This 177-nucleotide RNA was probed chemically with 2A3 and DMS.
RNA sequence: GGGAACGACUCGAGUAGAGUCGAAAAACAAGCUGCACGUGCGUGCGAGCAGUUUUCGAAAUCGCACGUUUCACGUAAAGACGCAACUCUACUCGAGAAUGCGAGUCACGCAGACAGCGUCAAGGAAGAUCGGUGUAGAUUUCGAUCUACACCGAUCAAAAGAAACAACAACAACAAC
Reactivity to 2A3 in 0.01 (KOAc 150mM, MgCl2 10mM, bicine 150mM(pH8.5), 24C), signal-to-noise 2, nucleotides 027 to 126: a000c090a040a050g090c050u060g020c100a010c030g030u020g050c030g000u020g010c000g000a040g050c050a010g000u050u030u130u270c060g060a040a120a000u030c010g010c000a000c000g000u050u170u110c090a020c010g000u030a080a040a000g090a020c010g010c040a040a000c010u000c000u030a000c000u030c000g010a000g000a000a000u030g020c000g000a010g100u060c020a020c110g100c010a020g020a230c030a070g000c000g020u020c050a060a100g120g080a050a110
Reactivity to DMS in 0.01 (KOAc 150mM, MgCl2 10mM, bicine 150mM(pH8.5), 24C), signal-to-noise 1, nucleotides 027 to 126: a060c120a140a150g000c040u030g010c300a000c000g010u000g020c050g000u000g000c000g020a020g000c030a280g000u000u010u010u010c100g000a030a100a190u000c010g000c020a000c000g010u020u050u000c020a030c060g000u000a000a130a010g000a200c110g000c060a050a030c000u000c000u000a000c000u000c000g010a010g090a040a000u000g020c030g000a170g000u000c080a050c060g010c030a050g000a060c060a090g030c020g040u030c110a160a080g000g030a070a060
For 2A3 the reverse transcriptase was SuperScript II with manganese. As a SHAPE reagent, 2A3 marks flexible, mostly unpaired nucleotides at the ribose 2'-OH. For 2A3, 1,544 sequencing reads were counted. The RNA was probed in 150 mM KOAc, 10 mM MgCl2 and 150 mM bicine (pH 8.5) at 24 C.